[RMDB]
Chemical mapping of a 207-nucleotide RNA with 2A3 and DMS. For 2A3, 700 sequencing reads were counted. For DMS, 1,379 sequencing reads were counted.
RNA sequence: GGGAACGACUCGAGUAGAGUCGAAAAUGGACGUCGCGCACGGCAAAAGAUGGGAUAUUGAGCUCCCAUCAUACACUUCUAAAUUGUCGGGAACGACCUGGAAGGGACUUGCGUUCCUUCCAAAAGGCUUUGGUUACCGCGGUCCGCCGAGAGGUGACACAAGUUCAGACUUCGGUCUGAACUUGUGAAAAGAAACAACAACAACAAC
Reactivity to 2A3 in 0.01 (KOAc 150mM, MgCl2 10mM, bicine 150mM(pH8.5), 24C), signal-to-noise 1, nucleotides 027 to 156: u110g000g010a040c040g080u100c000g000c000g000c060a010c030g000g050c020a010a050a000a070g020a000u000g000g000g000a020u000a100u150u260g070a150g060c020u030c020c000c000a000u000c000a000u000a000c040a000c090u130u120c000u110a090a090a230u030u020g020u020c020g010g020g010a070a080c050g070a040c000c010u020g000g000a010a000g030g000g020a000c030u060u170g040c060g000u000u000c000c000u000u000c000c000a100a000a000a000g000g000c030u090u090u100g040g020u030u090a050c030c030g000c030g010g000u010c020c050g000c000c000g080a070g010a000g080g050u100g030a000
Reactivity to DMS in 0.01 (KOAc 150mM, MgCl2 10mM, bicine 150mM(pH8.5), 24C), signal-to-noise 1, nucleotides 027 to 156: u000g000g010a060c040g000u000c100g000c040g120c010a110c000g020g040c020a080a090a150a140g010a020u000g000g000g000a100u000a300u000u000g000a160g000c180u000c020c000c000a010u000c000a050u010a130c050a010c120u000u010c090u020a020a060a170u000u010g000u000c000g000g000g000a070a110c000g010a010c010c070u030g030g040a080a010g050g000g010a050c030u000u050g000c300g030u000u000c010c000u020u000c050c000a010a000a180a130g030g050c040u000u000u030g030g010u010u000a050c040c040g000c030g080g050u000c010c050g010c020c030g010a150g010a190g010g050u000g020a260
Reactivities are given for positions 27 through 156. The reactions ran in a buffer of 150 mM KOAc, 10 mM MgCl2 and 150 mM bicine (pH 8.5), at 24 C.